Chemical mapping of a 177-nucleotide RNA with 2A3 and DMS. For DMS the reverse transcriptase was MarathonRT. It was measured as part of the RMDB library M2PK50. The DMS profile rests on 6,818 reads. Conditions: 150 mM KOAc, 10 mM MgCl2 and 150 mM bicine (pH 8.5), 24 C. Values cover nucleotides 27 to 126.

RNA sequence: GGGAACGACUCGAGUAGAGUCGAAAAGUUUGACUGUUCGCAGUCAAACAAAGGCUAAGGUAUAAAAAUCUCCUAGUUACCUAAGCCAAAAACGAGCAGAAAAAACGGCGUACUUCGGUACGCCGAACAAUAUCAAGUGGUUCGCCACUUGAUAUUGAAAAGAAACAACAACAACAAC
Reactivity to 2A3 in 0.01 (KOAc 150mM, MgCl2 10mM, bicine 150mM(pH8.5), 24C), signal-to-noise 3, nucleotides 027 to 126: g000u000u000u000g010a000c000u010g020u050u080c200g000c100a010g000u010c000a000a000a000c020a010a060a010g000g000c000u020a040a010g030g040u040a070u090a120a220a070a050a090u050c100u050c030c010u060a100g120u070u010a000c000c000u000a030a010g000c010c010a100a030a010a000a000c130g060a070g080c110a100g240a080a140a000a010a000a020c000g000g000c000g000u000a000c000u010u070c140g040g010u000a000c000g000c000c000g010a000a000
Reactivity to DMS in 0.01 (KOAc 150mM, MgCl2 10mM, bicine 150mM(pH8.5), 24C), signal-to-noise 5, nucleotides 027 to 126: g000u000u000u000g000a020c010u000g020u010u010c200g050c000a010g010u000c010a010a000a000c020a060a120a110g010g030c010u000a070a020g000g010u000a030u010a010a080a060a120a120u010c060u000c020c010u010a120g000u000u000a000c000c000u010a080a030g020c000c010a050a060a050a080a080c180g000a120g030c150a140g010a000a040a050a100a070a150c020g000g000c000g000u000a000c000u010u020c160g030g010u010a010c000g010c000c000g000a010a020